[RMDB]
RNA sequence: GGGAACGACUCGAGUAGAGUCGAAAACUUUUGGAGAGUUUGAUCCUGGCUCAGGACGAACGCUGGCGGCGUGCCUAAUACAUGCAAGUCGAGCGAAUCAGAUGGGAGCUUGCUCCCGGAUGAUUAGCCCACGUUAUACGUUCGCGUAUAACGUGGGAAAAGAAACAACAACAACAAC
Reactivity to 2A3 in 0.01 (KOAc 150mM, MgCl2 10mM, bicine 150mM(pH8.5), 24C), signal-to-noise 3, nucleotides 027 to 126: c020u070u100u120u300g210g130a160g000a050g040u020u040u110g090a120u020c000c010u060g070g030c060u070c130a020g000g040a010c030g030a080a030c010g020c040u000g020g040c000g010g030c020g030u040g000c010c010u120a100a020u150a130c050a030u050g030c040a100a080g020u050c010g090a030g020c030g070a000a020u000c010a000g010a010u030g000g000g000a000g020c050u080u100g020c010u020c000c000c020g000g000a000u000g000a010u010u050a000g000
Reactivity to DMS in 0.01 (KOAc 150mM, MgCl2 10mM, bicine 150mM(pH8.5), 24C), signal-to-noise 3, nucleotides 027 to 126: c030u000u000u020u000g010g020a230g000a030g000u000u000u000g000a160u000c000c010u000g010g010c080u010c070a080g010g000a080c110g000a040a090c040g020c040u010g030g030c050g000g010c020g020u000g000c060c080u000a070a090u000a160c090a030u000g000c060a020a060g040u000c070g000a060g000c020g010a040a020u000c000a020g000a300u000g000g000g000a010g000c030u020u000g010c000u000c000c000c000g000g000a300u000g000a020u020u000a100g000
Source: RMDB library OK2TRN, as collected in RNAgym. Chemical mapping of a 177-nucleotide RNA with 2A3 and DMS. Values cover nucleotides 27 to 126. For DMS, 2,211 sequencing reads were counted.